[RMDB]
RNA sequence: GGGAACGACUCGAGUAGAGUCGAAAAACAAGGGUAGCCAAAGAGUUCGCUAUAAACAGGCAGUUGACAGCCUAGGCAUGCGACCAUUGAGCAAAAGUGACGCGAGGGUCAGCACCUUCAUAAAAGCCUGUGCUACCAUAUUCGUAUGGUAGCACAGAAAAGAAACAACAACAACAAC
Reactivity to 2A3 in 0.01 (KOAc 150mM, MgCl2 10mM, bicine 150mM(pH8.5), 24C), signal-to-noise 6, nucleotides 027 to 126: a000c050a030a050g110g010g000u060a030g030c030c020a040a060a060g160a020g030u110u100c020g000c030u070a040u060a170a110a040c060a040g020g000c020a010g040u120u100g100a040c040a020g000c000c000u030a010g000g080c050a020u070g010c010g020a010c000c010a040u020u160g050a060g030c040a010a120a120a000g110u120g080a040c050g030c030g040a050g010g050g000u010c010a010g000c020a040c000c010u040u080c040a050u150a190a130a000a000g060c010
Reactivity to DMS in 0.01 (KOAc 150mM, MgCl2 10mM, bicine 150mM(pH8.5), 24C), signal-to-noise 4, nucleotides 027 to 126: a060c050a050a090g010g010g040u010a050g000c010c060a080a100a130g000a100g000u000u030c070g030c040u030a150u040a090a130a100c140a000g020g000c010a020g000u010u010g020a100c170a120g000c050c020u020a050g010g020c140a060u020g000c070g010a030c030c020a080u020u020g000a110g020c010a070a040a060a170g000u010g000a050c060g010c080g020a080g020g000g010u030c060a060g000c090a050c020c000u000u020c140a130u040a040a020a060a090g000c160

Chemical mapping of a 177-nucleotide RNA with 2A3 and DMS. It was measured as part of the RMDB library OK1LIB. For 2A3 the reverse transcriptase was SuperScript II with manganese. Reactivities are given for positions 27 through 126. The reactions ran in a buffer of 150 mM KOAc, 10 mM MgCl2 and 150 mM bicine (pH 8.5), at 24 C.